[RMDB]
RNA sequence: GGGAACGACUCGAGUAGAGUCGAAAAGAUAUGGAAGUGUCCCAUGUGAACGAAGAACUCGGAAACGAGGGAGUUCCAUGGGAGCACUUCCUAAGUCAAAAGUUAGAAUCGUUCGCGAUUCUAACAAUCAUGGUGGUAUGUUCGCAUACCACCAUGAAAAAGAAACAACAACAACAAC
Reactivity to 2A3 in 0.01 (KOAc 150mM, MgCl2 10mM, bicine 150mM(pH8.5), 24C), signal-to-noise 1, nucleotides 027 to 126: g000a020u070a050u190g020g020a010a030g000u000g030u050c000c020c020a000u050g130u240g030a000a010c010g050a300a110g030a050a020c010u000c030g030g020a050a060a050c020g000a000g000g010g000a000g000u000u020c000c000a000u000g000g030g000a040g000c010a000c000u010u030c000c000u000a030a020g040u020c040a110a060a000a040g030u020u000a000g000a020a000u000c020g000u070u040c300g000c010g090a000u000u030c000u010a000a000c010a000a050
Reactivity to DMS in 0.01 (KOAc 150mM, MgCl2 10mM, bicine 150mM(pH8.5), 24C), signal-to-noise 2, nucleotides 027 to 126: g010a060u000a300u000g010g000a030a000g010u000g020u000c000c000c010a000u000g010u020g020a010a000c010g020a090a170g030a120a160c000u000c000g000g000a140a070a210c010g000a000g000g010g000a050g000u000u000c000c000a000u000g000g010g010a020g030c000a000c000u010u010c000c000u000a010a070g000u010c030a090a070a100a120g000u000u000a000g000a010a000u000c000g010u010u010c280g030c020g010a010u000u000c000u000a000a010c000a100a050
This 177-nucleotide RNA was probed chemically with 2A3 and DMS. Conditions: 150 mM KOAc, 10 mM MgCl2 and 150 mM bicine (pH 8.5), 24 C.